[RMDB]
RNA sequence: GGGAACGACUCGAGUAGAGUCGAAAACGACAAGGGUGUAAAGAUCGCUCUUUUACUCGGCAUGAUACCACCGUUAUCGGGUCAACAGAGUAGUUGCAAAUGACAACAAUGCUCAGGAUUAUGCUCUAAAAGUUCGUACCCUUCGGGGUACGAACAAGAAGAAAUUGAACUUCGGUUCAAUUUCUUCAAAAGAAACAACAACAACAAC
Reactivity to DMS in 0.01 (KOAc 150mM, MgCl2 10mM, bicine 150mM(pH8.5), 24C), signal-to-noise 2, nucleotides 027 to 156: c030g000a070c100a020a070g010g020g020u000g020u000a050a100a150g000a150u000c030g050c060u000c020u000u000u010u010a100c040u010c050g010g070c010a070u010g020a100u010a060c030c000a190c000c000g040u010u000a070u000c080g000g000g020u010c030a110a130c090a080g000a070g010u010a040g030u000u000g000c010a070a120a190u000g020a120c040a030a050c020a000a070u000g000c030u010c010a110g030g000a110u000u010a090u000g020c040u000c030u000a040a090a120a180g030u000u000c000g000u000a000c010c000c010u000u000c250g080g010g050g020u000a000c010g010a010a010c000a010a060
Reactivity to 2A3 in 0.01 (KOAc 150mM, MgCl2 10mM, bicine 150mM(pH8.5), 24C), signal-to-noise 6, nucleotides 027 to 156: c060g120a010c070a020a030g020g030g000u060g060u200a180a130a030g100a120u160c030g010c030u030c030u020u050u020u040a100c080u050c010g000g000c010a010u050g010a020u090a110c000c010a010c030c000g100u110u080a070u140c030g000g000g030u020c010a010a020c040a050g020a000g020u060a020g000u020u030g020c040a060a220a300u220g070a130c000a020a000c000a030a160u090g020c000u020c030a000g040g000a010u050u110a050u220g030c010u030c030u130a080a110a030a040g000u000u000c000g000u000a010c000c000c000u020u040c160g040g000g000g000u000a000c000g000a000a000c000a000a000